Chemical mapping of a 177-nucleotide RNA with DMS and 2A3. The 2A3 profile rests on 1,465 reads. The DMS profile rests on 1,825 reads. Reactivities are given for positions 27 through 126.
RNA sequence: GGGAACGACUCGAGUAGAGUCGAAAACUGUGUGCUAGAGUACUCGUACGCGAUCGAUCCAUGCCAUGGAUCGGAUCUCUAGAGCUAGUGAUCCGUACGCGGAUCCACUGAUCGCUAGCCAUGUGACUCAUAGAGCGAGCUUCGGCUCGCUCUAUGAAAAAGAAACAACAACAACAAC
Reactivity to DMS in 0.01 (KOAc 150mM, MgCl2 10mM, bicine 150mM(pH8.5), 24C), signal-to-noise 3, nucleotides 027 to 126: c020u000g010u000g020u000g020c010u000a040g000a050g010u010a220c030u000c020g010u010a130c280g020c260g000a000u000c000g000a030u000c000c000a050u000g040c300c300a170u000g000g000a020u000c010g040g020a000u000c000u000c030u000a110g000a030g010c280u000a020g010u000g010a060u000c000c010g010u000a110c220g040c000g000g010a010u010c060c020a030c010u010g020a070u000c080g000c000u000a020g000c000c020a020u010g010u010g000a170c070
Reactivity to 2A3 in 0.01 (KOAc 150mM, MgCl2 10mM, bicine 150mM(pH8.5), 24C), signal-to-noise 2, nucleotides 027 to 126: c010u000g000u000g050u190g110c010u030a010g010a050g080u080a100c030u000c050g070u050a020c080g010c060g020a000u000c010g010a000u000c000c020a030u170g300c120c090a100u030g010g000a000u010c060g020g060a030u000c000u010c020u060a040g010a040g080c070u060a020g010u000g000a000u000c010c030g000u010a020c270g000c000g100g000a020u010c160c060a010c000u080g020a090u080c030g000c060u000a000g010c040c010a030u110g060u060g060a070c010

The data come from the RNA Mapping Database (RMDB), library OK2TRN. For 2A3 the reverse transcriptase was SuperScript II with manganese.